An RNA of 177 nucleotides, treated with 2A3 and DMS and read out base by base. Values cover nucleotides 27 to 126. The DMS profile rests on 8,291 reads. Conditions: 150 mM KOAc, 10 mM MgCl2 and 150 mM bicine (pH 8.5), 24 C.
[RMDB]
RNA sequence: GGGAACGACUCGAGUAGAGUCGAAAAUACAUAAUGCAAUGAUUGAUUAUAUCUAUAAUGCAUACAUUACUUAUUUGGAUGCUUAUUUAUCUGAUCAAGUAGAUGAUACUGAUAUUAUAAUAUGUGAUAAAUCACAUGGAUUCGUCCAUGUGAUUUAAAAAGAAACAACAACAACAAC
Reactivity to 2A3 in 0.01 (KOAc 150mM, MgCl2 10mM, bicine 150mM(pH8.5), 24C), signal-to-noise 2, nucleotides 027 to 126: u110a020c010a030u120a030a050u160g050c040a000a110u100g030a110u070u080g000a030u050u160a030u020a000u020c000u020a020u010a070a040u080g030c010a000u010a010c000a000u030u050a040c050u120u100a080u200u100u000g000g000a000u000g000c000u110u060a110u100u110u010a010u030c030u010g000a020u020c020a000a040g010u010a030g060a110u070g030a050u040a070c040u050g030a030u010a040u220u060a020u040a090a080u120a100u160g020u000g020a060
Reactivity to DMS in 0.01 (KOAc 150mM, MgCl2 10mM, bicine 150mM(pH8.5), 24C), signal-to-noise 6, nucleotides 027 to 126: u010a060c070a030u000a040a070u000g010c060a070a060u000g000a140u000u000g000a060u000u000a030u010a060u000c030u000a020u000a010a030u010g010c000a010u000a060c010a020u010u000a100c190u010u010a140u000u000u000g000g000a020u000g000c080u000u000a050u000u000u000a010u000c040u000g010a010u010c040a030a040g010u000a050g000a120u000g000a150u000a060c080u000g000a110u000a030u000u000a050u000a050a100u010a030u010g000u000g000a190